[RMDB]
RNA sequence: GGGAACGACUCGAGUAGAGUCGAAAAAAAGACGCGGUUGCCGAUCGGUAUGGAUGCCACCGUGACGGCUCAAUCACACAAGUGCCAACGAUAACUAGGCGCUCGCUAUUGCUGCGUAACUGACGGCUAGAUACAGCCAGGUUCGCCUGGCUGUAAAAGUAUCAAAAGUAUUCGUACUUUUGAUACUAAAAGAAACAACAACAACAAC
Reactivity to 2A3 in 0.01 (KOAc 150mM, MgCl2 10mM, bicine 150mM(pH8.5), 24C), signal-to-noise 4, nucleotides 027 to 156: a020a000a000g080a010c030g000c010g040g000u080u090g000c010c030g010a100u060c010g000g060u130a060u140g100g070a080u100g020c040c020a000c010c000g000u010g090a080c020g020g000c010u020c030a020a040u120c010a040c010a010c020a130a080g010u010g040c010c020a100a030c090g070a120u090a210a060c100u050a100g010g000c010g010c020u030c020g050c040u080a090u170u160g030c020u000g000c000g030u040a050a050c030u040g050a030c030g010g010c030u050a020g010a080u070a060c000a000g000c000c000a000g000g010u030u020c050g050c000c010u010g010g000c000u000g070u000a020a020a000
Reactivity to DMS in 0.01 (KOAc 150mM, MgCl2 10mM, bicine 150mM(pH8.5), 24C), signal-to-noise 3, nucleotides 027 to 156: a020a070a090g000a080c020g010c030g010g010u000u010g020c000c020g000a140u000c010g040g030u000a080u000g020g010a130u000g010c040c050a090c030c010g030u010g010a090c090g000g020c020u000c050a080a110u000c040a080c060a080c040a060a060g040u010g040c010c020a090a170c080g000a150u000a090a110c090u000a210g030g010c010g030c010u000c040g020c030u000a070u000u000g000c040u000g000c030g000u010a070a100c060u000g000a090c080g000g020c020u000a100g010a300u000a020c010a020g000c000c010a010g000g010u000u000c300g020c000c000u010g010g000c020u010g000u000a000a010a060
Chemical mapping of a 207-nucleotide RNA with 2A3 and DMS.
For DMS, 7,129 sequencing reads were counted.
2A3 is a SHAPE reagent: it acylates the 2'-hydroxyl of flexible nucleotides of all four kinds.